The record gives the reactivity of an RNA of 177 nucleotides to DMS and 2A3.
[RMDB]
RNA sequence: GGGAACGACUCGAGUAGAGUCGAAAAGAUAUGGAUGUGCCUAGUCCGAGUCUUAACUAUCCGAAGAACGCUCUCGGAAACGAGAGCGGGAGGAUAGUUAAGAUGGCGGAGGGCACAUCCUAAGUCACAAAUGAACCUUGUUCGCAAGGUUCAUUUGAAAAGAAACAACAACAACAAC
Reactivity to DMS in 0.01 (KOAc 150mM, MgCl2 10mM, bicine 150mM(pH8.5), 24C), signal-to-noise 4, nucleotides 027 to 126: g000a060u000a300u010g000g000a000u000g020u010g010c000c010u000a120g030u000c000c000g000a300g000u000c000u000u010a010a010c000u000a000u000c000c010g020a140a120g000a140a240c010g000c010u000c000u010c000g020g010a120a090a240c010g000a000g000a020g010c000g000g000g010a060g000g010a000u000a000g000u000u000a000a000g010a000u010g010g020c010g000g030a070g000g000g000c000a000c000a000u000c000c000u010a000a050g020u010c040a210
Reactivity to 2A3 in 0.01 (KOAc 150mM, MgCl2 10mM, bicine 150mM(pH8.5), 24C), signal-to-noise 2, nucleotides 027 to 126: g030a010u080a040u180g010g010a010u010g010u010g000c000c010u170a210g290u020c030c020g020a010g010u020c000u010u000a000a000c000u010a000u000c010c010g080a220a050g010a040a010c000g020c020u030c000u000c020g090g050a180a040a040c020g000a000g040a000g000c020g000g000g000a010g000g000a000u000a010g010u000u000a010a010g000a000u020g180g300c020g010g010a040g000g000g000c000a000c010a010u000c000c000u000a000a000g010u000c010a010
Source: RMDB library TTRINS, as collected in RNAgym. For 2A3, 4,986 sequencing reads were counted.